[RMDB]
RNA sequence: GGGAACGACUCGAGUAGAGUCGAAAAAGGGUGAUGCAUCCUGGUCUUCUACUAUGAUCUUCUCUCUUCACCCCGUCGAGUGUGACGAGGAGUGUUCUGAAGUAGAGGCUUCAGAUUUAGAAGAAGGGCGCUGGACGUUUCGACGUCCAGAAAAGAAACAACAACAACAAC
Reactivity to 2A3 in 0.01 (KOAc 150mM, MgCl2 10mM, bicine 150mM(pH8.5), 24C), signal-to-noise 8, nucleotides 027 to 129: a000g110g020g030u080g030a160u100g020c030a030u030c000c010u010g050g050u000c000u040u000c000u020a100c030u040a040u180g020a060u000c000u050u000c020u020c000u010c000u040u030c000a010c000c010c010c010g090u090c060g030a200g170u210g060u170g060a000c020g010a140g000g020a090g030u070g060u100u020c040u040g020a030a010g000u130a030g020a040g130g000c000u020u000c010a020g000a060u070u020u100a020g000a040a010g000a000a040g020g000g020c020g010
Reactivity to DMS in 0.01 (KOAc 150mM, MgCl2 10mM, bicine 150mM(pH8.5), 24C), signal-to-noise 5, nucleotides 027 to 129: a000g000g000g000u020g000a100u020g030c060a050u030c020c030u020g030g040u030c030u000u000c000u000a060c080u050a100u000g000a000u030c040u020u030c020u020c030u010c000u020u020c040a090c000c000c000c000g000u040c050g000a090g050u050g040u060g030a030c020g000a010g000g020a030g030u020g020u040u050c010u030g020a040a020g000u050a010g000a070g020g040c120u010u030c020a050g020a090u000u060u030a040g030a080a010g010a000a000g020g010g020c170g050
Source information:
Chemical mapping of a 170-nucleotide RNA with 2A3 and DMS. The DMS profile rests on 34,366 reads. For 2A3 the reverse transcriptase was SuperScript II with manganese. Source: RMDB library 15KLIB, as collected in RNAgym.